[RMDB]
RNA sequence: GGGAACGACUCGAGUAGAGUCGAAAAGAUAUGGACGUGCUAGGGAGCUCGUCGGAAACGACUGAGCGAAGAACUAGCACGCGUCCUAAGUCAAACCACUGGUGAUCGUUCGCGAUCACCAGUGGAAUCUUGUCUUUUACUUCGGUAAAAGACAAGAAAAAGAAACAACAACAACAAC
Reactivity to DMS in 0.01 (KOAc 150mM, MgCl2 10mM, bicine 150mM(pH8.5), 24C), signal-to-noise 3, nucleotides 027 to 126: g010a020u010a300u010g000g000a040c010g030u000g000c000u000a010g000g000g000a130g020c000u000c010g010u000c000g000g000a090a080a200c000g010a030c000u010g030a000g040c010g040a050a080g000a110a160c000u000a000g000c000a030c040g000c130g010u000c000c000u000a070a130g010u000c050a160a140a230c010c000a000c000u030g010g000u000g010a010u010c010g000u010u010c240g010c000g000a000u010c000a000c000c000a000g010u000g000g000a010a010